[RMDB]
RNA sequence: GGGAACGACUCGAGUAGAGUCGAAAAAAGGCUUUGCAGAAGGCUGUUAAUAUAGCUAAAAACGCCUAUGAGAAGGAUAAGGCAGUGGCCCGUAAGUUAGAACGUAUGGCUGAUCAGGCUAUGACUUGGACGUCCAUGUUCGCAUGGACGAAAAGAAACAACAACAACAAC
Reactivity to 2A3 in 0.01 (KOAc 150mM, MgCl2 10mM, bicine 150mM(pH8.5), 24C), signal-to-noise 5, nucleotides 027 to 129: a000a000g020g000c020u050u030u030g010c010a020g040a180a010g030g000c010u050g010u010u010a100a020u150a010u050a080g030c050u070a050a080a000a000a040c060g000c000c000u050a130u120g100a080g060a100a030g010g040a050u020a090a050g030g000c000a020g020u060g020g000c000c000c000g020u020a020a000g020u030u110a040g020a090a010c050g060u070a050u090g020g010c020u040g050a190u090c030a010g030g000c010u040a060u140g030a020c030u010u030g050g020a020
Reactivity to DMS in 0.01 (KOAc 150mM, MgCl2 10mM, bicine 150mM(pH8.5), 24C), signal-to-noise 6, nucleotides 027 to 129: a030a010g060g000c040u000u000u000g030c140a090g010a150a040g000g050c000u030g000u000u000a050a080u030a060u030a000g000c010u020a000a050a050a050a050c160g000c030c010u040a070u050g030a100g030a050a050g010g010a100u000a010a030g020g020c060a120g030u030g010g020c000c000c000g030u040a040a060g020u000u060a100g000a040a040c130g000u010a000u040g010g040c040u000g000a070u000c160a090g010g030c040u040a070u000g000a080c040u010u000g000g030a210
An RNA of 170 nucleotides, treated with 2A3 and DMS and read out base by base. It was measured as part of the RMDB library 15KLIB. Values cover nucleotides 27 to 129.